[RMDB]
RNA sequence: GGGAACGACUCGAGUAGAGUCGAAAAUAAACGACCAGAGCCCUAAUGUACUAGUCUAUAAGACUAGGUACAAUGGAACAUACUACGUUCAACCAUCAUUUGAUGUUCAAGAGAGUGAAGGAUAUGGCUGUACAAGCAACUUCGGUUGCUUGUACAGAAAAGAAACAACAACAACAAC
Reactivity to 2A3 in 0.01 (KOAc 150mM, MgCl2 10mM, bicine 150mM(pH8.5), 24C), signal-to-noise 6, nucleotides 027 to 126: u110a010a060a030c050g020a040c000c020a020g020a060g120c000c000c020u060a100a090u090g010u000a000c000u000a000g000u000c020u000a130u080a300a060g000a000c000u000a010g070g000u010a010c000a000a030u080g020g020a030a010c020a040u210a100c040u060a050c100g030u040u020c010a050a030c020c010a010u010c010a060u080u030u130g050a040u020g020u090u100c060a100a030g040a010g020a030g140u020g030a050a010g060g010a040u040a070u170g070g000
Reactivity to DMS in 0.01 (KOAc 150mM, MgCl2 10mM, bicine 150mM(pH8.5), 24C), signal-to-noise 3, nucleotides 027 to 126: u050a070a080a080c120g000a160c030c080a070g000a190g010c010c000c030u020a030a090u010g020u000a010c000u000a000g000u000c000u010a120u020a120a110g020a010c000u000a010g040g010u000a000c020a060a130u030g000g000a030a030c040a140u000a090c190u000a100c100g010u000u020c020a110a140c050c030a070u010c010a130u010u010u000g010a110u000g010u000u000c190a070a070g000a090g000a040g060u010g000a090a050g000g000a070u030a040u020g000g020